[RMDB]
RNA sequence: GGGAACGACUCGAGUAGAGUCGAAAAGAUAUGGAUGAUAUGGAGCUCGUGGAUCGGAAACGAUCCGAGCUAUGAAGUAUAUCCUAAGUCAAAGAAUAAAACCAUGCUUCGGCAUGGUUUUAUUCAAGCUAUUCGUAAAGUUCGCUUUACGAAUAGCAAAAGAAACAACAACAACAAC
Reactivity to DMS in 0.01 (KOAc 150mM, MgCl2 10mM, bicine 150mM(pH8.5), 24C), signal-to-noise 4, nucleotides 027 to 126: g010a050u010a300u010g000g000a010u000g000a030u000a010u000g010g010a020g010c000u000c000g010u000g030g000a010u010c000g010g000a090a070a170c000g000a010u000c010c000g000a010g010c000u000a110u010g010a120a190g000u000a010u000a070u000c000c000u000a030a180g000u000c030a090a100a150g010a010a010u000a000a010a010a000c000c000a000u000g000c010u000u010c250g040g010c000a000u000g000g000u000u000u000u000a000u000u000c010a050a110
Reactivity to 2A3 in 0.01 (KOAc 150mM, MgCl2 10mM, bicine 150mM(pH8.5), 24C), signal-to-noise 2, nucleotides 027 to 126: g030a000u070a040u090g000g010a000u230g040a010u170a020u050g010g030a020g000c000u030c080g160u300g130g020a010u000c020g030g030a040a060a040c000g000a000u000c000c000g020a000g000c010u040a300u050g000a000a020g000u000a000u010a010u010c010c020u040a120a010g020u060c070a060a030a200g000a020a000u010a010a020a000a000c000c000a000u000g000c040u130u160c300g030g030c020a000u030g000g000u010u000u000u000a000u000u000c000a000a000
Structure probing data (DMS and 2A3) for a 177-nucleotide construct.
For 2A3, 2,276 sequencing reads were counted.